[RMDB]
Conditions: 150 mM KOAc, 10 mM MgCl2 and 150 mM bicine (pH 8.5), 24 C. Structure probing data (DMS and 2A3) for a 207-nucleotide construct.

RNA sequence: GGGAACGACUCGAGUAGAGUCGAAAAACUCAAUGAGCAACUGCUACUGGCUCUCGAGAUGUGUAACCAGGAUAAAGCGGCGAUAAGGCGAAUUGAAGAACAGAAAAAUGAUAGCCAAAAAUGAAGAGCAGACGGAAUAUCUACAGAAAUACAUCAAGUUAAGAGUCCUUUUCGAAGGACUCUUAACAAAAGAAACAACAACAACAAC
Reactivity to DMS in 0.01 (KOAc 150mM, MgCl2 10mM, bicine 150mM(pH8.5), 24C), signal-to-noise 1, nucleotides 027 to 156: a190c000u000c030a110a100u010g020a150g050c000a110a030c040u030g030c010u010a030c020u000g000g040c010u020c010u050c000g030a190g010a130u010g080u010g020u000a080a070c040c030a130g020g030a110u000a030a100a100g020c120g020g000c090g000a080u000a030a090g000g000c030g030a070a080u000u000g020a110a080g020a090a140c060a150g000a020a000a050a100a020u000g030a120u000a030g000c030c050a050a080a080a130a080u040g030a090a110g030a070g090c040a030g000a040c050g000g010a090a030u000a130u000c030u010a100c020a070g030a130a050a120u000a030c030a070u000c050a040a160
Reactivity to 2A3 in 0.01 (KOAc 150mM, MgCl2 10mM, bicine 150mM(pH8.5), 24C), signal-to-noise 2, nucleotides 027 to 156: a000c050u030c030a030a110u120g040a030g010c070a020a120c090u110g010c020u040a040c040u040g050g020c000u000c010u020c060g110a120g020a090u030g070u000g030u050a050a210c020c010a010g020g010a040u130a130a170a010g030c020g020g000c020g040a050u010a190a070g060g000c020g020a030a030u050u050g010a070a020g020a040a030c060a030g090a060a070a000a020a030u130g040a000u010a020g040c020c000a020a080a050a060a030u110g040a040a040g020a000g050c040a010g030a030c060g030g020a010a040u040a030u030c020u050a010c000a020g050a040a070a000u080a040c010a070u160c060a020a090
The 2A3 profile rests on 971 reads. 2A3 adducts were read by reverse transcription with SuperScript II with manganese. Reactivities are given for positions 27 through 156.